An RNA of 207 nucleotides, treated with 2A3 and DMS and read out base by base.
For 2A3 the reverse transcriptase was SuperScript II with manganese.
The RNA was probed in 150 mM KOAc, 10 mM MgCl2 and 150 mM bicine (pH 8.5) at 24 C.
[RMDB]
RNA sequence: GGGAACGACUCGAGUAGAGUCGAAAAGGUGCUCUGAAUGGAGUGCUCUACUGAGAUUAUAAAAUAGAAGGUAAGCUAUUAUCUCUUACAACAGGGCAGGGCUUGUUGGAAUAGGCGGUAAAGUUUAAAAACUACCUCACCUUCGGGUGAGGUAGAACCUUAUACAUGAGUUCGCUCAUGUAUAAGGAAAAGAAACAACAACAACAAC
Reactivity to 2A3 in 0.01 (KOAc 150mM, MgCl2 10mM, bicine 150mM(pH8.5), 24C), signal-to-noise 4, nucleotides 027 to 156: g030g010u020g000c010u010c020u060g190a150a110u250g030g010a020g010u030g010c010u010c020u090a080c050u050g040a020g030a090u090u110a070u230a140a110a080a050u090a040g050a100a030g110g030u130a030a010g010c020u010a020u110u030a050u060c020u000c010u050u060a050c010a130a030c020a060g020g030g020c000a020g050g000g000c020u020u050g030u020u010g020g020a070a040u030a050g060g000c050g040g010u060a010a050a050g010u030u070u170a040a090a010a000a000c000u000a010c000c000u000c000a000c000c010u010u030c140g070g000g000u000g010a000g000g000u000a000g000a000a000
Reactivity to DMS in 0.01 (KOAc 150mM, MgCl2 10mM, bicine 150mM(pH8.5), 24C), signal-to-noise 2, nucleotides 027 to 156: g010g020u000g000c010u000c010u000g010a200a120u010g030g000a080g030u000g020c020u000c030u000a100c030u000g010a180g020a100u000u020a100u000a090a040a090a140u000a100g000a140a090g010g010u000a040a080g020c090u010a060u000u010a040u000c020u000c010u000u000a080c020a040a110c010a070g000g030g040c000a080g020g000g010c020u000u000g010u000u000g010g000a030a100u000a080g020g000c020g010g000u000a030a040a100g020u000u000u000a030a030a050a130a100c000u000a010c000c000u000c000a020c000c010u010u020c300g020g010g060u000g020a000g000g020u000a000g000a000a060